Structure probing data (2A3 and DMS) for a 177-nucleotide construct. The 2A3 profile rests on 1,135 reads. For DMS the reverse transcriptase was MarathonRT. For DMS, 2,710 sequencing reads were counted. The reactions ran in a buffer of 150 mM KOAc, 10 mM MgCl2 and 150 mM bicine (pH 8.5), at 24 C. Reactivities are given for positions 27 through 126. 2A3 is a SHAPE reagent: it acylates the 2'-hydroxyl of flexible nucleotides of all four kinds.
RNA sequence: GGGAACGACUCGAGUAGAGUCGAAAAACUGAGAGGUGGGCAAAGCUUGCUGGGUGGGUGUGCCUGCAGUGCCAACUGCCAGGCUGUUAAUUCAGUAGGACACUGUCCCCAACUGGCCCAACUGCACCAAGGGACCUGAAUUCGUUCAGGUCCCUUGAAAAGAAACAACAACAACAAC
Reactivity to 2A3 in 0.01 (KOAc 150mM, MgCl2 10mM, bicine 150mM(pH8.5), 24C), signal-to-noise 3, nucleotides 027 to 126: a000c110u110g040a090g020a040g050g170u260g110g010g000c090a110a140a080g000c140u190u240g030c020u060g040g060g090u300g060g060g000u110g070u050g000c000c000u000g010c000a020g010u100g110c060c050a160a020c020u030g040c070c040a020g020g040c000u030g050u030u150a080a080u060u100c000a000g000u010a030g080g060a000c050a030c180u150g020u050c020c000c040c010a000a050c030u060g050g020c000c000c000a040a030c060u080g010c020a050c030
Reactivity to DMS in 0.01 (KOAc 150mM, MgCl2 10mM, bicine 150mM(pH8.5), 24C), signal-to-noise 2, nucleotides 027 to 126: a170c010u000g010a190g000a210g000g000u020g030g000g000c070a070a080a100g050c110u000u010g000c050u030g000g000g010u020g020g010g050u020g020u000g010c030c000u000g000c000a010g000u010g000c140c300a070a040c000u000g000c100c060a000g000g000c000u030g000u020u000a020a020u000u000c010a000g000u020a040g000g000a080c000a030c240u010g000u050c080c000c000c050a000a030c080u000g010g020c070c010c000a030a050c110u020g000c010a110c110